Source: RMDB library OK2TRN, as collected in RNAgym. The record gives the reactivity of an RNA of 177 nucleotides to 2A3 and DMS. The DMS profile rests on 5,251 reads. Reactivities are given for positions 27 through 126. The RNA was probed in 150 mM KOAc, 10 mM MgCl2 and 150 mM bicine (pH 8.5) at 24 C. The 2A3 profile rests on 8,764 reads.
RNA sequence: GGGAACGACUCGAGUAGAGUCGAAAACUAGCGUCCGCUUAUACGCGCGCUCACGGAUGCAGAUGCUCGAACAACAGCGCGCGGGCAUGCAGUCGCAGCGCCAAUACACGCGGCCGUCGUGACUGGAGGAUACGGCUUGAUUCGUCAAGCUGUAUCCAAAAGAAACAACAACAACAAC
Reactivity to 2A3 in 0.01 (KOAc 150mM, MgCl2 10mM, bicine 150mM(pH8.5), 24C), signal-to-noise 3, nucleotides 027 to 126: c020u020a020g020c000g000u000c010c000g030c030u110u100a030u040a060c040g050c000g000c000g010c000u010c020a060c010g050g010a060u040g000c020a020g030a130u130g000c000u020c020g050a080a010c020a020a010c010a040g020c010g000c000g000c000g000g000g000c000a010u000g000c000a010g060u030c020g010c020a010g000c020g000c020c010a040a030u090a050c070a010c060g000c000g010g000c000c000g030u050c020g010u000g020a020c010u010g010g030a030
Reactivity to DMS in 0.01 (KOAc 150mM, MgCl2 10mM, bicine 150mM(pH8.5), 24C), signal-to-noise 4, nucleotides 027 to 126: c020u000a100g010c000g010u000c010c000g000c060u000u000a100u010a100c040g000c080g010c000g000c000u000c150a090c110g000g000a050u000g000c010a140g000a090u010g020c020u000c040g000a080a100c080a100a190c140a030g000c040g020c090g000c000g000g000g010c010a050u000g000c000a040g000u000c020g010c130a010g000c100g020c010c030a080a080u010a060c130a090c150g020c040g000g010c010c020g010u000c070g000u000g010a180c010u000g000g000a300